[RMDB]
RNA sequence: GGGAACGACUCGAGUAGAGUCGAAAACGGGCUACAAUGGAUAGGACAAUGGGUAACUACACCGAAAGGUGGCGUCAAUCUCUUAAACCUAUCCUUAGUUCGGAUUGAGGGCUGGAACUCGCCCUCAUAUAACUCUCUGAUUCGUCAGAGAGUUAUAAAAAGAAACAACAACAACAAC
Reactivity to 2A3 in 0.01 (KOAc 150mM, MgCl2 10mM, bicine 150mM(pH8.5), 24C), signal-to-noise 9, nucleotides 027 to 126: c000g000g010g000c010u040a020c140a160a210u160g000g010a000u000a000g010g020a020c080a110a110u140g010g010g020u070a020a000c000u040a020c010a000c000c000g040a060a010a010g000g000u000g000g010c000g000u010c020a070a060u010c030u010c000u060u160a120a210a080c000c000u000a000u000c000c000u000u000a000g000u000u000c000g010g020a040u030u080g000a010g000g020g010c040u070g050g130a100a070c040u020c080g010c000c000c000u000c000a000
Reactivity to DMS in 0.01 (KOAc 150mM, MgCl2 10mM, bicine 150mM(pH8.5), 24C), signal-to-noise 9, nucleotides 027 to 126: c010g010g000g000c000u000a030c300a130a070u030g000g010a010u000a000g010g010a070c160a100a090u020g000g000g010u010a080a020c010u010a100c010a000c000c000g010a110a090a140g010g020u000g000g000c100g000u000c060a050a170u010c000u000c020u010u010a110a150a080c000c000u000a010u000c000c000u010u000a000g010u000u000c000g010g000a130u020u010g000a010g010g000g020c010u000g010g020a170a100c120u020c100g000c000c000c010u000c000a010

This 177-nucleotide RNA was probed chemically with 2A3 and DMS.
The reactions ran in a buffer of 150 mM KOAc, 10 mM MgCl2 and 150 mM bicine (pH 8.5), at 24 C.